[RMDB]
RNA sequence: GGGAACGACUCGAGUAGAGUCGAAAAUAAAUGUUUUGUGUGUUCUGACUGCUCAACUGGCUCAACUGACCAGCUAUUCUCAAAUUCUCUCCUCCUUGAGGCUCUCUAUUGCCUGAGACACAGCAAUAUUGAAAUUAGGUCAUUUAGUAACCCCACACACAUUGCGUAGUUUCGACUACGCAAUGUGAAAAGAAACAACAACAACAAC
Reactivity to DMS in 0.01 (KOAc 150mM, MgCl2 10mM, bicine 150mM(pH8.5), 24C), signal-to-noise 1, nucleotides 027 to 156: u010a110a110a180u020g000u000u000u000u000g030u000g000u000g020u000u000c050u030g000a140c070u000g010c030u000c020a070a050c020u000g010g020c000u000c050a160a140c110u020g010a050c030c000a000g020c000u000a120u000u010c070u010c040a010a100a140u000u000c040u000c020u000c010c000u000c040c060u010u000g020a030g040g020c040u010c030u020c050u000a080u010u000g010c010c040u010g020a120g000a090c100a140c100a050g000c040a020a030u020a140u000u020g020a030a060a140u000u010a070g020g020u000c030a070u000u000u000a120g000u020a090a170c020c010c010c000a060c190a300
Reactivity to 2A3 in 0.01 (KOAc 150mM, MgCl2 10mM, bicine 150mM(pH8.5), 24C), signal-to-noise 2, nucleotides 027 to 156: u160a020a040a020u080g030u010u050u040u020g040u020g000u000g040u050u000c050u080g060a060c020u010g020c060u070c050a050a080c080u050g010g000c000u020c090a070a120c110u150g030a190c010c010a020g050c060u120a130u150u050c050u040c090a110a110a180u170u020c090u000c000u010c040c000u020c040c010u020u040g030a040g020g000c010u010c000u000c000u040a050u020u070g040c000c020u040g050a030g000a030c040a000c000a030g000c030a070a010u040a100u120u060g050a040a040a100u100u030a010g000g030u000c040a030u040u070u050a010g010u020a040a070c000c000c060c000a030c000a000
An RNA of 207 nucleotides, treated with DMS and 2A3 and read out base by base.
The DMS profile rests on 2,492 reads.
Source: RMDB library OK3TST, as collected in RNAgym.
For 2A3, 724 sequencing reads were counted.